The record gives the reactivity of an RNA of 177 nucleotides to DMS. Values cover nucleotides 27 to 126. Source: RMDB library M2PK90, as collected in RNAgym. For DMS, 1,390 sequencing reads were counted. The reactions ran in a buffer of 150 mM KOAc, 10 mM MgCl2 and 150 mM bicine (pH 8.5), at 24 C. DMS adducts were read by reverse transcription with MarathonRT.

RNA sequence: GGGAACGACUCGAGUAGAGUCGAAAAACUUUGGCCGACGCUGCUAGGCGGGUGCGCACUGCUGUCUGGCCCGGCGCCGCGCUAGGGCGCACGUUUCGCUCUGCGGAGGGUAACCGGGCUGUAAUAAAGCAUAUGCGUGAUUCGUCACGCAUAUGCUAAAAGAAACAACAACAACAAC
Reactivity to DMS in 0.01 (KOAc 150mM, MgCl2 10mM, bicine 150mM(pH8.5), 24C), signal-to-noise 2, nucleotides 027 to 126: a060c080u020u010u000g000g020c020c010g020a130c080g000c060u000g050c110u010a120g020g010c030g030g020g030u000g020c050g010c030a050c080u010g010c070u000g000u000c050u000g000g020c000c010c000g010g010c250g020c000c010g050c010g000c030u010a020g000g000g000c030g000c100a050c200g030u010u010u000c010g000c010u000c000u000g010c040g000g010a150g020g000g020u010a110a120c020c010g000g000g000c040u000g020u010a020a060u020a060a080